Record summary: The record gives the reactivity of an RNA of 207 nucleotides to DMS and 2A3. Conditions: 150 mM KOAc, 10 mM MgCl2 and 150 mM bicine (pH 8.5), 24 C. High 2A3 reactivity points to a flexible backbone, as in loops and unpaired stretches. It was measured as part of the RMDB library M2RFPK.
RNA sequence: GGGAACGACUCGAGUAGAGUCGAAAAGUAAAGAUCGCUCUUUUACUCGGCAUGAUACCACCGUUAUCGGGUCAACAGAGUAGUUGCAAAUGACAACAAUGCUCAGGGCUAUGCUCUCGCUGCCUAAAAAAUCGUUUAACGUUCGCGUUAAACGAAACCUAAUCCCGAAGUUCGCUUCGGGAUUAGGAAAAGAAACAACAACAACAAC
Reactivity to DMS in 0.01 (KOAc 150mM, MgCl2 10mM, bicine 150mM(pH8.5), 24C), signal-to-noise 1, nucleotides 027 to 156: g010u010a050a050a070g010a080u000c170g020c090u010c020u020u000u010u000a070c020u000c010g010g020c000a100u050g020a090u000a120c020c020a210c000c040g010u010u000a010u000c130g040g040g030u000c040a140a090c090a090g050a090g020u000a080g030u010u010g070c020a080a080a180u020g020a170c020a030a020c040a020a060u000g000c030u000c000a050g010g040g000c040u000a070u000g030c000u000c000u000c040g040c010u000g000c010c050u030a010a030a070a020a050a080u010c010g030u010u010u010a010a010c000g000u000u020c300g020c000g050u000u000a010a000a010c010g010a000a020a080
Reactivity to 2A3 in 0.01 (KOAc 150mM, MgCl2 10mM, bicine 150mM(pH8.5), 24C), signal-to-noise 6, nucleotides 027 to 156: g030u040a020a000a020g020a110u120c090g020c110u050c060u030u110u020u040a030c010u010c000g000g000c020a030u090g000a000u030a020c000c000a010c020c010g090u110u060a030u060c040g000g000g000u000c010a010a020c040a020g010a010g020u090a010g010u040u040g040c070a100a200a290u190g060a120c010a030a000c010a040a160u100g000c000u010c030a010g010g020g000c040u130a040u200g020c010u060c040u060c150g010c030u060g020c010c020u130a100a090a000a010a010a030u030c000g000u000u000u000a010a020c010g000u010u040c280g000c000g080u010u000a000a000a000c000g000a030a000a010